[RMDB]
RNA sequence: GGGAACGACUCGAGUAGAGUCGAAAACUAGAUUUUGAAUCAUGAGUAUAUGGAUCAGGUAUCUAGGAUGCCGGCCAUAAAAGAUCAACCUGCGGCAGCGGCGAAAGCUCGCUCCUUCACGUCGAUAAUUUUAAAUGCGUUUCGACGCAUUUAAAAUAAAAGAAACAACAACAACAAC
Reactivity to 2A3 in 0.01 (KOAc 150mM, MgCl2 10mM, bicine 150mM(pH8.5), 24C), signal-to-noise 1, nucleotides 027 to 126: c000u050a060g030a150u080u060u050u200g090a020a070u030c010a030u080g080a030g220u170a090u020a000u260g070g020a120u090c060a150g000g050u030a010u020c070u140a100g120g120a000u050g020c040c000g030g000c000c020a040u050a040a160a010a000g050a010u040c010a030a030c010c010u030g000c000g000g000c020a000g010c010g040g000c010g000a070a020a010g000c050u110c090g030c010u000c000c020u010u100c060a040c030g030u010c010g020a050u060a110
Reactivity to DMS in 0.01 (KOAc 150mM, MgCl2 10mM, bicine 150mM(pH8.5), 24C), signal-to-noise 3, nucleotides 027 to 126: c030u010a070g010a060u000u000u010u010g020a060a060u000c030a090u010g030a190g010u010a120u010a020u010g010g000a060u000c010a050g060g020u000a010u000c010u020a120g010g010a080u000g050c040c030g030g010c060c030a070u000a030a070a120a120g000a060u010c030a060a040c040c020u000g040c300g000g020c210a040g030c020g000g000c010g010a080a060a090g000c020u000c050g020c020u000c220c000u000u000c070a030c140g000u010c030g010a020u010a060
Structure probing data (2A3 and DMS) for a 177-nucleotide construct. It was measured as part of the RMDB library OK2TST. The 2A3 profile rests on 1,532 reads. DMS (dimethyl sulfate) methylates the pairing face of unpaired adenines and cytosines. The RNA was probed in 150 mM KOAc, 10 mM MgCl2 and 150 mM bicine (pH 8.5) at 24 C.